[RMDB]
RNA sequence: GGGAACGACUCGAGUAGAGUCGAAAACGAGACUUCGGUCUCGCUAGCCUCCUAAGUCACUGAACUAAGGGAGGACGAUAAGUGUCGGAAACGACACUUUUGACGUCCGUUGAUCUUAGUGAACAGUGAUAUGGACUCCUCCGGCAUUCGUGCCGAACCCAGUCUUACGUUUCGACGUAAGACUGGGAAAAGAAACAACAACAACAAC
Reactivity to 2A3 in 0.01 (KOAc 150mM, MgCl2 10mM, bicine 150mM(pH8.5), 24C), signal-to-noise 2, nucleotides 027 to 156: c010g000a010g020a010c040u100u190c270g100g000u000c000u020c010g000c020u020a060g020c000c030u050c010c000u160a170a000g010u000c000a000c000u000g250a250a000c000u030a000a000g030g000g000a070g010g000a000c000g030a020u030a010a010g000u000g010u010c020g040g060a150a070a020c000g000a010c000a000c000u000u000u030u020g120a030c000g020u010c000c010g000u040u020g000a000u000c000u000u020a000g020u060g110a110a070c020a020g000u000g000a000u000a030u060g000g040a030c040u080c020c020u080c070c010g000g000c020a030u080u120c260g090u040g000c010c000g080a070a060